[RMDB]
RNA sequence: GGGAACGACUCGAGUAGAGUCGAAAAGAAAGGGACCCCUGCCAAGGGACGCAGCCAGUCGAGCCCAGGCAUGUUUUUGCAUGCCGGACUGACCCCUACUGCGGGCAGGAGGGGUGGUCCCGAAAGACCAUAUACCUACGUUCGCGUAGGUAUAUGGAAAAGAAACAACAACAACAAC
Reactivity to DMS in 0.01 (KOAc 150mM, MgCl2 10mM, bicine 150mM(pH8.5), 24C), signal-to-noise 9, nucleotides 027 to 126: g010a080a100a140g010g000g000a050c010c010c300c000u000g010c010c050a140a150g010g010g010a230c080g010c010a020g000c070c300a040g000u000c010g010a060g000c010c010c010a150g010g000c000a000u000g000u000u000u010u000u010g010c010a000u000g000c000c000g000g000a010c010u000g010a080c010c020c020c030u000a080c010u000g010c030g010g010g010c010a040g010g000a130g000g000g010g020u010g010g010u000c000c000c000g000a040a070a100g010a250
Reactivity to 2A3 in 0.01 (KOAc 150mM, MgCl2 10mM, bicine 150mM(pH8.5), 24C), signal-to-noise 3, nucleotides 027 to 126: g010a030a040a000g000g000g010a020c010c020c000c000u010g040c020c020a110a070g120g010g020a000c030g000c020a000g030c020c030a010g010u020c040g100a040g050c000c000c020a010g000g000c000a000u010g100u020u200u100u170u300g020c000a000u000g000c010c000g010g000a000c000u020g020a010c000c000c000c050u030a060c020u030g040c050g010g110g000c010a010g000g020a020g000g020g010g020u040g010g010u010c000c000c010g010a030a010a000g040a000
Description:
An RNA of 177 nucleotides, treated with DMS and 2A3 and read out base by base. For 2A3 the reverse transcriptase was SuperScript II with manganese. The RNA was probed in 150 mM KOAc, 10 mM MgCl2 and 150 mM bicine (pH 8.5) at 24 C.